[RMDB]
This 207-nucleotide RNA was probed chemically with 2A3. Values cover nucleotides 27 to 156. 2A3 adducts were read by reverse transcription with SuperScript II with manganese. For 2A3, 468 sequencing reads were counted. It was measured as part of the RMDB library M2RFPK.

RNA sequence: GGGAACGACUCGAGUAGAGUCGAAAAACUUUGAUGGAGGUACUAUGAAUUGAUGCAAGGUGUGGAGCGACCUUAAACAGUUCUGGUGGUGCUCUGAAUGGAGUGCUCUACUGAGAUUAUAAAAUAGCAUGCAUAGAGUGCUUCGGCACUCUAUGAACCGACUCGAAGCGUUCGCGCUUCGAGUCGGAAAAGAAACAACAACAACAAC
Reactivity to 2A3 in 0.01 (KOAc 150mM, MgCl2 10mM, bicine 150mM(pH8.5), 24C), signal-to-noise 1, nucleotides 027 to 156: a010c060u080u020u150g000a010u090g060g000a000g040g010u050a010c050u040a060u220g060a060a040u050u140g120a070u060g140c090a130a020g050g000u040g040u080g060g000a030g000c010g010a010c000c000u030u020a000a110a040c060a090g030u000u030c020u030g030g000u050g000g040u010g030c000u030c020u030g120a080a030u210g070g000a010g000u010g020c000u030c020u040a020c000u020g020a030g030a010u140u080a020u260a160a040a040a000u140a040g060c120a010u060g060c000a000u030a000g000a000g000u000g010c000u030u000c070g040g010c000a000c010u000c000u000a000u000g000a000a010